[RMDB]
The record gives the reactivity of an RNA of 177 nucleotides to DMS and 2A3.
RNA sequence: GGGAACGACUCGAGUAGAGUCGAAAACACCACUUCUUGCUGGAAAGGAUUAUCCAACGGUUCUCUUUCUAUCAGCGCAGUGGUGAGCGCUUUGAGUAAAUCCAGUUGAUUAGAAUGAUAAACCGUAAGUGGAUUAGGGAUUCGUCCCUAAUCCACUAAAAGAAACAACAACAACAAC
Reactivity to DMS in 0.01 (KOAc 150mM, MgCl2 10mM, bicine 150mM(pH8.5), 24C), signal-to-noise 2, nucleotides 027 to 126: c050a170c000c000a040c090u000u010c010u000u000g020c090u020g010g010a040a060a090g000g000a100u010u010a100u000c040c100a120a060c060g010g010u000u000c200u000c030u010u000u000c010u000a020u000c030a020g000c010g030c120a040g020u000g000g000u010g000a120g010c000g020c080u000u000u000g000a130g000u010a030a090a100u010c010c080a100g000u030u040g010a060u000u010a010g000a020a000u010g000a060u010a040a020a030c030c010g010u010a100
Reactivity to 2A3 in 0.01 (KOAc 150mM, MgCl2 10mM, bicine 150mM(pH8.5), 24C), signal-to-noise 2, nucleotides 027 to 126: c030a020c010c010a010c000u020u000c020u030u070g020c040u040g020g090a080a070a050g080g010a160u090u170a080u290c050c040a020a020c010g000g000u030u010c040u000c000u050u040u020c030u000a040u050c030a000g000c000g020c030a050g050u080g170g070u050g060a050g010c010g000c000u080u130u260g060a080g040u160a050a090a060u070c020c010a060g030u020u010g020a030u050u110a010g000a000a040u060g030a030u050a030a080a010c000c000g020u010a070

Conditions: 150 mM KOAc, 10 mM MgCl2 and 150 mM bicine (pH 8.5), 24 C.